[RMDB]
RNA sequence: GGGAACGACUCGAGUAGAGUCGAAAAAAGAAACAUUGUUUAUGCAAAGGCACUUCGCAAUGUGUGCUCAAACAAUGCUUAUUCAAACACGCUUCACAAUGUGCGACAAAGAAACAUUGUUAUAAGAUCCACUAAGUCGCCUUCGGGCGACUUAGAACAUUACUCUAAGCUUCGGCUUAGAGUAAUGAAAAGAAACAACAACAACAAC
Reactivity to 2A3 in 0.01 (KOAc 150mM, MgCl2 10mM, bicine 150mM(pH8.5), 24C), signal-to-noise 4, nucleotides 027 to 156: a000a000g060a000a020a010c010a000u000u000g010u010u040u050a130u170g060c070a080a100a120g050g000c000a010c040u190u180c160g070c220a150a120u190g020u000g000u020g030c010u050c070a010a000a000c000a010a000u010g020c030u090u070a060u080u090c040a000a040a020c060a010c060g000c010u000u000c010a000c010a010a020u000g010u010g010c010g030a040c080a070a170a020g090a030a040a000c000a000u000u010g020u040u030a110u010a040a070g020a040u060c050c000a040c050u000a000a000g000u000c000g010c000c010u020u060c140g060g000g000c000g000a000c000u000u000a000g000a000a000
Reactivity to DMS in 0.01 (KOAc 150mM, MgCl2 10mM, bicine 150mM(pH8.5), 24C), signal-to-noise 2, nucleotides 027 to 156: a040a060g010a150a040a010c030a000u000u000g010u000u010u000a060u040g030c060a120a080a100g000g000c020a020c030u000u000c170g040c170a080a080u020g010u000g010u010g010c000u000c070a120a030a000c000a030a020u000g010c030u000u010a080u000u020c080a110a100a100c050a070c020g020c110u000u000c120a120c050a070a060u000g030u000g030c040g020a170c100a100a040a040g010a140a040a020c020a040u000u000g010u000u010a090u000a120a090g000a160u020c040c040a180c000u020a020a030g020u000c000g000c010c010u000u010c300g050g030g060c000g010a000c010u000u000a030g000a030a130